[RMDB]
RNA sequence: GGGAACGACUCGAGUAGAGUCGAAAAGAACCCUACCGCAUGAGCCGACCUUGACAAAAGUGGAGUAGGGGUAAAUUCUCACGAUUCGGCGCGAAGGAGAAAAGAAAGAAGAAAAGAAAAAGAAAAAGCAUACCAUACUGUUCGCAGUAUGGUAUGCAAAAGAAACAACAACAACAAC
Reactivity to DMS in 0.01 (KOAc 150mM, MgCl2 10mM, bicine 150mM(pH8.5), 24C), signal-to-noise 2, nucleotides 027 to 126: g020a110a070c010c000c000u020a070c040c000g000c060a090u060g050a190g030c030c000g000a120c040c240u030u000g000a240c190a060a150a030a060g000u000g000g010a110g000u000a000g040g010g000g000u020a000a040a180u000u000c000u000c000a140c150g000a140u010u010c040g010g010c000g000c060g000a140a110g010g000a010g000a010a000a150a040g000a030a060a040g050a130a050g040a030a010a060a160g030a020a150a000a070a030g020a070a040a190a120a130
Reactivity to 2A3 in 0.01 (KOAc 150mM, MgCl2 10mM, bicine 150mM(pH8.5), 24C), signal-to-noise 2, nucleotides 027 to 126: g030a000a070c000c000c000u000a000c030c000g190c040a090u110g060a020g000c020c020g080a070c010c060u050u100g020a060c110a150a200a000a000g080u040g030g000a070g030u020a020g010g000g040g000u010a000a000a120u040u000c010u000c000a030c070g010a050u040u000c030g030g000c020g000c050g010a000a010g110g040a010g110a000a060a050a070g140a080a020a100g100a020a020g080a030a050a000a020g250a000a070a000a020a000g210a000a020a000a000a000
Structure probing data (DMS and 2A3) for a 177-nucleotide construct. The DMS profile rests on 1,744 reads. The reactions ran in a buffer of 150 mM KOAc, 10 mM MgCl2 and 150 mM bicine (pH 8.5), at 24 C. DMS adducts were read by reverse transcription with MarathonRT.